[RMDB]
RNA sequence: GGGAACGACUCGAGUAGAGUCGAAAAACGCGGCGUACGCGCCGCGAAAAGACUAUACUUUCAGGGAUCAUUUCUAUAGUUCGUUACUAGAGAAGUUUCUCUGAUCGUGUAGAGCACCGAAAACCACGAGGAGGAGGCGCAGUGUUCUCUCCUGAGCGUGAAGCCGGCUCUUGGUGUCGCUUUGCUGCGACUGCCUUUUGCCAUUGAUGAUCGUUCUUCCUUCCCGCAAGGGUGGGUAAGAGGGAGAGGACGCAGUCUGAGUGGUAAGUUCCCGCUUCGGCGGGAACAAAAGAAACAACAACAACAAC
Reactivity to 2A3 in 0.01 (KOAc 150mM, MgCl2 10mM, bicine 150mM(pH8.5), 24C), signal-to-noise 2, nucleotides 027 to 266: a000c000g010c000g010g010c020g010u040a060c240g030c000g020c160c000g000c000g060a000a020a030a000g040a000c010u020a010u010a010c000u020u010u000c000a000g010g000g000a010u060c040a030u030u000u020c000u000a060u000a030g020u020u190c060g050u100u180a010c010u000a000g010a000g000a030a000g000u000u070u000c000u000c000u000g000a000u000c000g000u000g000u010a000g000a000g040c050a040c040c020g060a080a000a000a010c010c000a000c000g010a010g100g020a010g050g040a010g040g060c090g020c150a060g030u020g010u040u000c000u000c000u000c000c010u020g050a040g010c020g010u010g030a020a000g090c060c030g000g000c010u030c000u020u040g030g040u000g010u000c000g040c050u150u210u300g190c220u070g000c020g030a020c080u100g120c010c000u000u030u030u030g010c020c020a100u100u280g050a070u060g000a010u080c020g030u010u010c000u020u010c000c000u000u020c000c000c000g000c040a060a040g000g050g000u030g010g000g010u080a090a030g070a130g090g000g000a000g000a000g000g000a000c000g000c000a010g020u000c010u010g010a010g040u020g020g000u030a000a000
Reactivity to DMS in 0.01 (KOAc 150mM, MgCl2 10mM, bicine 150mM(pH8.5), 24C), signal-to-noise 1, nucleotides 027 to 266: a000c000g020c000g020g020c000g050u010a090c040g030c040g040c000c000g000c000g000a000a010a090a180g020a090c010u000a000u000a010c000u000u000u010c020a010g000g010g020a020u000c110a030u030u020u010c030u000a070u000a010g000u000u000c150g020u020u010a030c000u000a030g000a030g000a010a020g020u000u020u000c000u000c000u010g000a000u000c040g000u000g000u000a000g000a060g000c070a250c000c010g020a060a050a120a060c020c000a020c010g000a300g000g000a070g000g000a060g010g010c060g040c150a120g020u000g000u010u030c000u000c010u000c000c010u000g000a050g020c010g000u000g000a200a150g010c100c300g000g000c000u000c000u000u000g000g040u000g010u000c020g000c010u000u010u020g000c220u000g010c000g000a000c020u000g030c000c010u000u000u000u000g010c000c000a110u020u020g020a040u010g010a150u000c010g020u000u010c000u000u000c000c010u000u000c010c000c000g000c250a140a100g000g010g030u010g000g030g010u000a030a030g040a150g000g000g000a010g060a020g000g000a030c020g000c020a050g000u000c000u000g000a300g000u010g000g000u000a060a180

This 307-nucleotide RNA was probed chemically with 2A3 and DMS. For 2A3, 2,758 sequencing reads were counted. It was measured as part of the RMDB library POS240. The reactions ran in a buffer of 150 mM KOAc, 10 mM MgCl2 and 150 mM bicine (pH 8.5), at 24 C.